This 177-nucleotide RNA was probed chemically with DMS and 2A3. DMS adducts were read by reverse transcription with MarathonRT. The reactions ran in a buffer of 150 mM KOAc, 10 mM MgCl2 and 150 mM bicine (pH 8.5), at 24 C. It was measured as part of the RMDB library M2PK90. For 2A3, 3,474 sequencing reads were counted. For DMS, 7,157 sequencing reads were counted.

RNA sequence: GGGAACGACUCGAGUAGAGUCGAAAAGCUGAGUAUACGAGGUUAGUUGAUUCUCGUAUGCAUGAUUGGACAAAUUAAAAUCUCAAUUUGGAUCAGGGCCUCCCUCCAGCGACGGCCGAACAUACAAGAUUAUGCAUUCUUUCGAGAAUGCAUAAUCAAAAGAAACAACAACAACAAC
Reactivity to DMS in 0.01 (KOAc 150mM, MgCl2 10mM, bicine 150mM(pH8.5), 24C), signal-to-noise 6, nucleotides 027 to 126: g010c010u010g010a170g010u000a020u000a010c010g010a010g010g020u010u000a120g010u010u010g010a080u010u000c000u000c000g000u000a000u010g000c020a110u010g000a080u010u000g010g010a070c040a030a020a030u000u000a050a050a100a120u010c150u010c100a040a030u000u000u010g010g000a120u000c030a070g010g000g000c010c010u000c010c010c010u000c130c020a020g000c000g000a070c160g000g000c010c030g000a030a030c130a040u010a140c240a060a090
Reactivity to 2A3 in 0.01 (KOAc 150mM, MgCl2 10mM, bicine 150mM(pH8.5), 24C), signal-to-noise 3, nucleotides 027 to 126: g020c020u040g030a010g030u010a010u000a010c000g010a000g020g040u150u080a090g120u260u300g110a130u220u070c000u000c000g000u000a010u020g000c010a060u070g030a060u050u100g020g000a000c010a010a000a030u100u110a090a150a110a200u070c080u000c120a020a050u020u020u040g080g010a140u050c050a060g010g000g070c000c000u010c000c020c000u080c030c020a010g000c010g020a040c050g010g030c000c010g000a030a000c040a000u130a020c040a070a020